The record gives the reactivity of an RNA of 177 nucleotides to 2A3 and DMS. It was measured as part of the RMDB library OK2TRN. Reactivities are rounded to 0.1 and cut off at 0 and 3. The DMS profile rests on 2,020 reads. Values cover nucleotides 27 to 126. For 2A3 the reverse transcriptase was SuperScript II with manganese. For 2A3, 1,454 sequencing reads were counted.
RNA sequence: GGGAACGACUCGAGUAGAGUCGAAAAGUGCUUUACUGCCAGGCCAAGGAUCGUGGGCUCUACGUCUGCGCCGCGCGCAACUCGGCGGGCCAGACGCUCAGUGCCGUGCAGCUGCACGUGAAAGGUACUCUGGUCUAAUCUUCGGAUUAGACCAGAGAAAAGAAACAACAACAACAAC
Reactivity to 2A3 in 0.01 (KOAc 150mM, MgCl2 10mM, bicine 150mM(pH8.5), 24C), signal-to-noise 1, nucleotides 027 to 126: g020u020g030c020u070u130u150a070c050u020g030c000c000a080g010g000c000c020a080a060g150g020a060u040c030g050u080g000g000g000c000u000c030u060a030c010g010u000c010u000g000c050g030c060c050g230c030g000c000g040c030a080a300c040u060c100g060g000c000g000g010g000c010c010a050g030a070c010g010c050u010c040a040g030u020g110c000c020g020u050g040c040a000g080c010u080g000c000a000c000g040u050g060a100a140a050g120g040u050a040
Reactivity to DMS in 0.01 (KOAc 150mM, MgCl2 10mM, bicine 150mM(pH8.5), 24C), signal-to-noise 2, nucleotides 027 to 126: g010u010g010c020u020u010u000a100c030u000g010c030c070a080g000g000c030c060a150a130g010g010a040u000c010g010u010g020g010g000c020u000c040u000a130c050g000u010c010u000g030c110g040c010c190g020c220g010c030g010c060a150a080c150u010c050g020g010c070g010g010g000c010c000a020g010a010c010g030c120u000c050a080g010u010g030c030c000g000u000g010c030a040g000c170u000g000c010a020c060g000u010g000a070a060a100g000g000u000a140